Description: This 177-nucleotide RNA was probed chemically with 2A3 and DMS. The reactions ran in a buffer of 150 mM KOAc, 10 mM MgCl2 and 150 mM bicine (pH 8.5), at 24 C.
RNA sequence: GGGAACGACUCGAGUAGAGUCGAAAAUUGUAGAGCGGGCAACUGUUUUGCGAGCUUAUUUUUGGGUUUAGGUGUUCUGCUUUGAGGGGCUUGCUCCGUUCUGCUUUACAAUUAACAACUAAUUUAGCACGACGUUUAAUUUCGAUUAAACGUCGUGAAAAGAAACAACAACAACAAC
Reactivity to 2A3 in 0.01 (KOAc 150mM, MgCl2 10mM, bicine 150mM(pH8.5), 24C), signal-to-noise 5, nucleotides 027 to 126: u010u000g000u000a010g000a010g020c020g010g040g010c080a050a010c070u080g070u160u210u140u120g020c000g010a010g000c010u110u050a110u130u150u050u060u170g100g000g020u090u140u110a060g000g040u090g130u210u190c040u080g060c000u050u080u130g030a060g010g040g020g010c000u000u010g000c000u010c010c010g010u030u020c000u010g000c000u000u000u010a000c000a000a030u010u040a120a030c060a010a020c020u110a040a170u170u120u120a040g040
Reactivity to DMS in 0.01 (KOAc 150mM, MgCl2 10mM, bicine 150mM(pH8.5), 24C), signal-to-noise 1, nucleotides 027 to 126: u000u020g030u000a000g020a000g000c010g000g020g000c220a200a090c100u030g010u040u050u050u000g000c020g000a050g030c010u010u020a000u050u000u030u040u010g010g020g000u010u040u060a030g040g020u010g000u000u060c040u000g000c040u030u010u100g010a020g000g000g010g000c030u010u000g000c010u000c110c180g040u020u000c000u020g010c000u000u020u010a020c000a000a080u000u000a100a100c180a090a190c070u020a010a070u020u010u040a060g000